An RNA of 177 nucleotides, treated with 2A3 and DMS and read out base by base. For 2A3, 4,074 sequencing reads were counted. It was measured as part of the RMDB library OK1LIB.
RNA sequence: GGGAACGACUCGAGUAGAGUCGAAAAUGCGCGCCAGUGGUGUGAUGCUUCGUGACGGCCGAAGUCAUACCCGUUGCGGAGUCCGUGCUUGCGGCGUCAGAGUCGGCCUUGCGUGCUGCAGCGGCUACAGGGUAAUCACUUUCGAGUGAUUACCCUGAAAAGAAACAACAACAACAAC
Reactivity to 2A3 in 0.01 (KOAc 150mM, MgCl2 10mM, bicine 150mM(pH8.5), 24C), signal-to-noise 4, nucleotides 027 to 126: u150g000c040g010c010g000c010c000a050g040u060g050g120u070g060u070g060a110u210g010c000u010u000c000g020u040g020a040c030g020g000c030c070g150a110a040g090u120c040a010u100a090c010c000c010g030u010u010g000c000g000g020a020g000u010c020c020g040u070g020c050u060u050g030c000g060g010c010g010u010c060a010g000a010g070u060c040g000g070c010c000u010u030g030c030g040u080g050c080u070g000c030a030g030c020g040g010c010u040a050
Reactivity to DMS in 0.01 (KOAc 150mM, MgCl2 10mM, bicine 150mM(pH8.5), 24C), signal-to-noise 2, nucleotides 027 to 126: u030g000c080g010c040g000c020c030a130g020u030g000g010u000g050u010g010a070u010g010c030u000u000c020g000u020g020a020c050g020g000c110c090g000a140a180g000u010c120a110u000a140c270c000c000g000u010u010g000c040g000g000a030g000u000c060c060g010u020g030c060u000u020g030c130g000g000c020g000u030c040a110g010a050g000u000c030g010g000c010c040u000u000g000c020g010u020g000c030u010g010c010a070g050c040g000g000c050u010a110
The DMS profile rests on 4,720 reads. The reactions ran in a buffer of 150 mM KOAc, 10 mM MgCl2 and 150 mM bicine (pH 8.5), at 24 C. DMS adducts were read by reverse transcription with MarathonRT.